[RMDB]
RNA sequence: GGGAACGACUCGAGUAGAGUCGAAAAGAUAUGGAAACUUCGGGUAGCGAUGACUAUUCGGAAACGAACGAAUCAUCGAACUACUACAGAAGUUUCCUAAGUCAAAAUCUAUGCUUCGGCAUAGAAAUCAACUUUGAAUGUUCGCAUUCAAAGUUGAAAAAGAAACAACAACAACAAC
Reactivity to 2A3 in 0.01 (KOAc 150mM, MgCl2 10mM, bicine 150mM(pH8.5), 24C), signal-to-noise 1, nucleotides 027 to 126: g000a020u110a000u140g000g010a020a000a000c000u010u000c020g000g000g040u000a010g010c020g000a000u010g040a000c090u040a040u000u050c020g000g000a050a060a050c020g000a030a010c050g080a130a300u030c000a020u000c000g050a130a100c000u000a000c000u040a050c070a110g010a000a020g000u000u000u000c000c010u000a090a000g030u000c000a010a030a040a250u000c000u000a000u000g000c020u050u070c250g120g030c000a010u000a030g000a030a010a010
Reactivity to DMS in 0.01 (KOAc 150mM, MgCl2 10mM, bicine 150mM(pH8.5), 24C), signal-to-noise 2, nucleotides 027 to 126: g000a010u000a300u000g010g000a000a000a010c000u000u000c010g000g000g020u000a000g030c000g010a020u000g030a030c060u000a300u000u000c000g000g000a080a060a240c010g010a000a020c100g030a040a120u010c000a010u000c000g000a090a060c020u000a020c000u010a090c050a100g000a000a020g000u000u000u000c000c000u000a020a050g020u000c020a150a080a170a100u010c000u000a010u000g010c000u000u020c180g020g000c000a000u000a000g000a020a090a150